[RMDB]
RNA sequence: GGGAACGACUCGAGUAGAGUCGAAAAGAUGGGCCUUCUGGUAAUGUACCUGGCCGCCCAGGAGGUCCUGAGGAAGAGAUAGACGGCCAGGGUCCGAUCAUACGAUAUAAACCUGCUCUACGUAUGAUCGGUUAUGACAAUUAAGAAGAGCAGGUUAAUCGCAUCAUAUAUUCGUAUAUGAUGCGAUAAAAGAAACAACAACAACAAC
Reactivity to 2A3 in 0.01 (KOAc 150mM, MgCl2 10mM, bicine 150mM(pH8.5), 24C), signal-to-noise 9, nucleotides 027 to 156: g110a050u080g000g000g000c010c000u000u000c000u000g010g030u120a150a120u170g060u140a160c000c000u000g000g000c000c000g010c000c000c000a000g000g000a000g010g000u030c010c020u040g030a060g030g110a090a090g030a010g040a100u110a090g040a060c010g000g000c000c000a000g000g000g000u010c000c000g000a000u000c000a000u000a010c010g030a050u010a020u050a190a210a050c000c000u000g000c000u000c000u010a020c010g000u000a000u000g000a000u000c000g000g000u000u030a010u010g000a000c020a030a120u210u190a170a060g070a060a000g000a030g000c000a000g000g000u000u040a010
Reactivity to DMS in 0.01 (KOAc 150mM, MgCl2 10mM, bicine 150mM(pH8.5), 24C), signal-to-noise 1, nucleotides 027 to 156: g030a080u000g000g010g020c020c000u010u010c030u010g010g010u000a030a080u030g020u000a070c030c010u010g010g030c020c010g000c100c040c020a010g000g010a030g070g020u000c000c020u020g010a120g010g020a140a180g000a150g020a260u000a090g010a170c010g040g000c000c000a020g000g020g000u000c000c000g000a010u000c000a010u000a010c010g000a050u000a020u000a010a020a010c030c000u000g000c010u000c010u000a030c010g010u000a030u010g010a030u000c010g020g020u010u020a050u000g000a190c230a070a170u020u010a070a090g000a240a030g020a050g000c000a020g020g030u000u000a040
This 207-nucleotide RNA was probed chemically with 2A3 and DMS. For 2A3, 13,322 sequencing reads were counted. The DMS profile rests on 2,899 reads. Source: RMDB library OK3TST, as collected in RNAgym. For DMS the reverse transcriptase was MarathonRT. The RNA was probed in 150 mM KOAc, 10 mM MgCl2 and 150 mM bicine (pH 8.5) at 24 C.